[RMDB]
RNA sequence: GGGAACGACUCGAGUAGAGUCGAAAAAACACUCUCGCUGUAUACGAGCAAAAUGCCGAUCACAGCCGCUGACGUGCUCAAUGACCGCGUAUUGCCGUUCAACAACCGGUAACUGUCAGCUCAGGUCGAUUAUGGCCUCUUUCGAGAGGCCAUAAUCAAAAGAAACAACAACAACAAC
Reactivity to 2A3 in 0.01 (KOAc 150mM, MgCl2 10mM, bicine 150mM(pH8.5), 24C), signal-to-noise 2, nucleotides 027 to 126: a000a010c050a020c020u000c000u000c040g000c010u010g050u020a060u070a140c000g030a110g140c060a130a250a060a230u230g040c000c000g020a070u100c060a010c010a060g010c040c040g000c020u020g040a050c070g100u120g000c050u110c060a080a070u230g060a040c000c090g060c020g000u030a130u000u140g100c070c010g100u120u080c020a140a070c020a010a030c030c000g000g000u010a000a110c010u000g050u070c010a010g020c060u050c070a030g020g030u120c060
Reactivity to DMS in 0.01 (KOAc 150mM, MgCl2 10mM, bicine 150mM(pH8.5), 24C), signal-to-noise 2, nucleotides 027 to 126: a020a080c120a080c010u000c030u000c050g010c080u000g070u010a120u000a100c100g000a050g030c060a060a080a130a100u010g010c060c040g050a120u000c140a070c040a020g060c060c050g000c120u010g000a110c080g000u000g010c050u010c070a120a110u000g000a050c070c010g010c140g000u000a050u010u010g000c030c010g000u010u000c090a050a050c120a050a170c230c050g000g000u000a090a030c030u000g000u000c060a070g000c050u010c070a110g000g030u000c020
This 177-nucleotide RNA was probed chemically with 2A3 and DMS. The DMS profile rests on 799 reads. For DMS the reverse transcriptase was MarathonRT. Values cover nucleotides 27 to 126. DMS (dimethyl sulfate) methylates the pairing face of unpaired adenines and cytosines. The reactions ran in a buffer of 150 mM KOAc, 10 mM MgCl2 and 150 mM bicine (pH 8.5), at 24 C.